[RMDB]
RNA sequence: GGGAACGACUCGAGUAGAGUCGAAAAAUCACCAUGAUGCAAUCGGGUUGAACACUUAAUUGGGUUAAAACGGUGGGGGACGAUCCCGUAACAUCCGUCCUAACGGCGACAGACUGCACGGCCCUGCGCCAUUUUCUGACUUCGGUCAGAAAAUGGCAAAAGAAACAACAACAACAAC
Reactivity to DMS in 0.01 (KOAc 150mM, MgCl2 10mM, bicine 150mM(pH8.5), 24C), signal-to-noise 1, nucleotides 027 to 126: a030u020c140a090c060c000a090u000g000a130u010g000c010a050a140u000c090g000g000g040u000u030g000a040a060c150a120c010u040u030a110a110u000u000g000g040g000u030u000a070a090a040a080c090g000g000u000g000g000g000g010g000a070c080g000a120u030c010c000c000g060u030a040a070c070a050u000c050c000g070u000c110c010u000a160a210c020g000g020c150g000a010c020a120g000a050c100u000g000c060a070c060g000g000c020c070c000u010g040c030
Reactivity to 2A3 in 0.01 (KOAc 150mM, MgCl2 10mM, bicine 150mM(pH8.5), 24C), signal-to-noise 2, nucleotides 027 to 126: a000u190c160a170c110c000a120u210g000a010u020g070c050a000a100u080c000g050g000g000u030u020g060a190a000c000a050c060u000u120a060a100u190u050g030g020g030u080u080a000a000a000a000c000g060g000u050g000g010g020g000g000a010c060g040a000u200c030c000c070g010u090a060a040c000a050u040c000c040g000u010c000c000u050a070a050c000g030g040c030g040a000c000a030g020a010c020u100g000c010a000c000g090g000c000c000c000u000g050c000